[RMDB]
RNA sequence: GGGAACGACUCGAGUAGAGUCGAAAAGACAAUCAGUUCGCUGAUUGUCAAAAGAGCAGCUAUGAGCUCAAGUGUCAUAGCAAAAGAUCGAAAGAUGAAAAAAAAGCAGAUACUUCGGUAUCUGCAAGAAGUUUUAUGAGUUCGCUCAUAAAACUUCAAAAGAAACAACAACAACAAC
Reactivity to DMS in 0.01 (KOAc 150mM, MgCl2 10mM, bicine 150mM(pH8.5), 24C), signal-to-noise 2, nucleotides 027 to 126: g020a000c000a000a000u000c000a010g000u000u040c190g020c030u010g020a020u000u000g020u000c000a010a020a120a190g000a000g020c000a240g000c000u010a010u000g010a000g010c010u000c000a110a100g020u010g020u000c000a010u010a020g000c000a120a050a090a110g000a020u000c020g000a160a050a110g020a020u010g010a000a010a040a050a110a080a090a190g000c000a010g010a010u000a010c000u000u020c190g010g020u000a010u000c000u000g010c010a050a010
Reactivity to 2A3 in 0.01 (KOAc 150mM, MgCl2 10mM, bicine 150mM(pH8.5), 24C), signal-to-noise 2, nucleotides 027 to 126: g010a000c000a000a000u000c000a000g020u030u070c130g040c150u010g010a010u000u000g000u020c000a010a010a010a000g000a000g000c020a000g000c010u000a010u020g010a000g000c000u050c120a090a060g180u150g000u160c000a010u010a000g000c010a000a070a020a030g040a020u050c040g050a040a040a030g050a030u080g120a130a060a010a010a000a010a030a040g020c000a000g000a000u000a000c010u020u080c140g050g020u000a000u000c010u020g000c000a000a030
Source: RMDB library M2PK50, as collected in RNAgym. The record gives the reactivity of an RNA of 177 nucleotides to DMS and 2A3. For 2A3 the reverse transcriptase was SuperScript II with manganese. Values cover nucleotides 27 to 126. For 2A3, 2,471 sequencing reads were counted. The reactions ran in a buffer of 150 mM KOAc, 10 mM MgCl2 and 150 mM bicine (pH 8.5), at 24 C.